[RMDB]
RNA sequence: GGGAACGACUCGAGUAGAGUCGAAAAACUCUGGCUGUUGUAAACAAUUAAGAUCCGUUCCUUCUGGCCUUCACUAGCAGUCUUACUGGUAGUUACGGGAGAUAGAUCAUAAGACCAGGAGGUAUAAACUAUGUUGUAGGUUCGCCUACAACAUAGUAAAAGAAACAACAACAACAAC
Reactivity to 2A3 in 0.01 (KOAc 150mM, MgCl2 10mM, bicine 150mM(pH8.5), 24C), signal-to-noise 3, nucleotides 027 to 126: a000c030u050c020u030g080g000c060u020g010u090u060g090u130a100a120a050c040a070a090u190u260a190a010g070a130u060c060c020g020u040u000c010c000u000u020c000u000g020g000c020c000u020u030c030a020c030u020a090g050c010a020g000u080c070u100u190a120c010u030g140g070u020a000g030u020u050a050c040g060g060g000a030g000a020u170a050g060a040u080c020a020u040a140a010g030a020c000c000a010g020g010a000g000g000u060a060u060a100a050
Reactivity to DMS in 0.01 (KOAc 150mM, MgCl2 10mM, bicine 150mM(pH8.5), 24C), signal-to-noise 6, nucleotides 027 to 126: a080c050u010c020u000g020g030c030u000g020u000u010g000u000a090a060a100c140a070a080u010u010a080a100g000a070u000c040c050g010u010u000c000c000u000u000c010u000g000g020c010c070u000u000c160a060c040u000a040g000c020a100g000u000c170u000u000a100c020u000g000g010u000a040g010u000u000a070c130g000g020g000a070g000a130u000a080g000a090u000c100a060u010a030a010g000a030c010c010a020g000g010a010g000g010u000a040u000a040a090